[RMDB]
RNA sequence: GGGAACGACUCGAGUAGAGUCGAAAAGAAGAGAGUCGACGCAAGCGACGAUAACUGCGGAACGGUAACCGUAGUACCGUAUGGUCAUGGCACGCGAAAGCGAAAGACCGAAGCAUGCCAUAAGAGAACGAUACUAUAGUUUCGACUAUAGUAUCGUAAAAGAAACAACAACAACAAC
Reactivity to DMS in 0.01 (KOAc 150mM, MgCl2 10mM, bicine 150mM(pH8.5), 24C), signal-to-noise 9, nucleotides 027 to 126: g010a100a060g010a090g010a190g010u000c040g000a100c070g000c160a100a110g020c030g000a030c020g010a080u020a090a090c030u010g010c010g000g010a100a100c110g010g020u030a070a100c010c030g010u010a030g010u010a040c050c020g020u010a070u020g000g010u020c060a050u000g000g000c030a090c050g010c010g000a070a160a120g010c010g010a080a070a120g000a100c030c030g000a170a190g000c030a050u010g000c000c020a020u010a090a080g010a110g010a120
Reactivity to 2A3 in 0.01 (KOAc 150mM, MgCl2 10mM, bicine 150mM(pH8.5), 24C), signal-to-noise 9, nucleotides 027 to 126: g150a040a020g100a000g020a020g020u050c020g010a100c030g030c130a080a090g040c020g050a040c040g010a050u080a100a050c020u030g000c010g000g030a060a050c040g080g040u100a100a040c020c010g030u040a010g020u010a050c010c010g020u040a070u120g030g010u100c050a020u030g030g000c020a010c030g000c010g060a090a020a030g020c020g070a160a070a020g070a040c020c040g000a030a000g030c010a010u050g000c010c000a030u070a080a050g100a000g030a060